[RMDB]
RNA sequence: GGGAACGACUCGAGUAGAGUCGAAAAUUAUUGGUGCCUGUUAUAUGCAAGGUCCUGGCUUCCCCACACAGACAAGAAAACAAACAAAUAAAUGAAUAAAUGUCAGCUGCAAGGAUUGGAGUGGAUUCUUGCAUUUGCAUAGCACAGUGAGUGUAGAGUCCCUGGUGGUAUUCGUACCACCAGGGACAAAAGAAACAACAACAACAAC
Reactivity to 2A3 in 0.01 (KOAc 150mM, MgCl2 10mM, bicine 150mM(pH8.5), 24C), signal-to-noise 1, nucleotides 027 to 156: u180u060a060u070u060g140g020u120g000c000c000u010g080u120u140a150u050a020u100g010c010a050a000g000g010u050c000c000u000g170g020c040u060u090c000c000c000c000a010c000a000c000a000g030a000c020a050a140g100a180a020a080a000c100a000a080a000c030a050a220a000u160a090a060a010u080g050a110a040u220a290a140a000u100g020u040c030a010g000c050u040g000c020a030a040g040g000a020u160u160g050g010a040g000u130g010g010a000u220u040c000u000u000g000c000a000u000u000u020g000c000a010u020a010g000c040a000c020a040g040u060g060a010g020u100g030u150a060g010a040